Source information
Conditions: 150 mM KOAc, 10 mM MgCl2 and 150 mM bicine (pH 8.5), 24 C. Chemical mapping of a 207-nucleotide RNA with 2A3. It was measured as part of the RMDB library OK3TST. Values cover nucleotides 27 to 156.
[RMDB]
RNA sequence: GGGAACGACUCGAGUAGAGUCGAAAACGGGCGAAGCGCGAGCGCGAUGCCCUGCGCCGCGCUGCGCUGGGCGGUCGCCGCUUCAACAUGGACAUGUACCAGGGAACGGCUGAUGCACUCGAUCUGAUCUGCGCGGCCGGUGGCUUCGCCGAGCCGGCUACCACUCGUGGUUCGCCACGAGUGGUAGAAAAGAAACAACAACAACAAC
Reactivity to 2A3 in 0.01 (KOAc 150mM, MgCl2 10mM, bicine 150mM(pH8.5), 24C), signal-to-noise 2, nucleotides 027 to 156: c040g030g010g010c020g000a010a000g020c040g010c010g020a020g000c040g000c000g000a030u060g000c000c000c000u000g000c030g010c000c000g300c160g050c300u160g020c020g000c040u030g000g010g010c040g070g040u020c000g020c100c030g000c000u130u040c040a040a050c020a170u070g030g000a040c070a160u230g050u240a160c000c000a010g050g000g040a090a000c000g000g040c030u060g040a300u130g030c010a020c000u100c040g130a280u070c110u300g040a060u060c020u060g010c010g000c000g030g010c000c020g000g030u050g060g030c000u000u020c010g000c010c010g000a020g030c000c000g050g000